[RMDB]
Structure probing data (DMS and 2A3) for a 177-nucleotide construct.
Reactivities are given for positions 27 through 126.
It was measured as part of the RMDB library OK1LIB.
For 2A3 the reverse transcriptase was SuperScript II with manganese.

RNA sequence: GGGAACGACUCGAGUAGAGUCGAAAACACGAAGGUUGGCUAAUCCUGGUCGGACAUCAGGUGGUUAGUGCAGUGGCAUAAGCCACCUUGGCGCUAAUAGAUACUAAUCGUAGCAUAGCUGAAUAAAGGAUAAUGGCUCAUUCGUGAGCCAUUAUCCAAAAGAAACAACAACAACAAC
Reactivity to DMS in 0.01 (KOAc 150mM, MgCl2 10mM, bicine 150mM(pH8.5), 24C), signal-to-noise 1, nucleotides 027 to 126: c070a080c170g030a300a120g000g000u030u000g050g000c000u050a100a060u000c000c030u000g020g000u000c010g010g000a090c130a010u000c070a010g000g030u000g020g010u000u000a080g010u020g000c010a120g000u000g000g030c000a080u000a080a070g010c000c010a030c000c000u000u000g060g000c030g000c000u000a040a150u000a000g000a020u000a130c090u070a010a010u000c020g000u010a070g030c000a010u000a030g000c070u040g000a080a050u000a080a020a030
Reactivity to 2A3 in 0.01 (KOAc 150mM, MgCl2 10mM, bicine 150mM(pH8.5), 24C), signal-to-noise 2, nucleotides 027 to 126: c080a010c040g010a100a060g070g010u060u060g050g030c040u050a060a110u030c000c000u000g000g070u140c120g050g030a000c010a040u050c020a000g000g040u010g000g060u150u050a030g000u000g000c040a060g030u080g180g000c010a040u010a260a020g000c050c000a020c000c000u030u020g030g020c010g000c000u000a000a000u080a100g030a030u060a150c050u190a000a110u060c040g010u040a000g000c010a100u010a060g000c050u030g040a190a060u090a140a070a000